[RMDB]
RNA sequence: GGGAACGACUCGAGUAGAGUCGAAAAUCUGUUGACAAGUAAUCGUUAAGUCGAAGUCGGACAACGGUUGCGGCAACAGAAGUCAGUUAGCCUCAAGUCCGACUUGGACUAUUGCUAGAACUGAUCACUACAGCUUAGUAUUCGUACUGAGCUGUAGAAAAGAAACAACAACAACAAC
Reactivity to 2A3 in 0.01 (KOAc 150mM, MgCl2 10mM, bicine 150mM(pH8.5), 24C), signal-to-noise 8, nucleotides 027 to 126: u000c010u010g020u030u030g030a030c040a080a000g010u010a010a020u030c030g010u030u080a060a000g000u000c050g070a020a000g030u020c000g000g000a000c000a010a010c030g010g000u000u000g000c000g000g000c000a030a020c020a120g100a080a010g020u000c020a020g000u020u130a010g000c000c000u040c090a100a030g000u000c000c000g010a030c030u000u030g010g000a000c000u010a060u030u100g000c010u010a010g000a030a010c010u010g010a030u030c020a010
Reactivity to DMS in 0.01 (KOAc 150mM, MgCl2 10mM, bicine 150mM(pH8.5), 24C), signal-to-noise 9, nucleotides 027 to 126: u000c020u000g010u000u000g010a120c090a070a080g020u000a020a050u000c180g010u000u000a090a060g010u000c010g000a060a020g010u000c060g010g000a020c010a020a160c210g010g010u000u000g010c060g000g000c010a040a070c130a080g010a090a100g010u000c040a050g020u000u000a040g010c000c050u000c150a090a150g000u000c000c000g000a050c080u000u000g000g010a010c000u000a050u010u000g010c020u000a090g000a060a030c020u000g000a070u000c140a170

Source: RMDB library OK2TRN, as collected in RNAgym. Chemical mapping of a 177-nucleotide RNA with 2A3 and DMS. The reactions ran in a buffer of 150 mM KOAc, 10 mM MgCl2 and 150 mM bicine (pH 8.5), at 24 C. DMS adducts were read by reverse transcription with MarathonRT. For DMS, 54,882 sequencing reads were counted. The 2A3 profile rests on 45,773 reads. 2A3 adducts were read by reverse transcription with SuperScript II with manganese.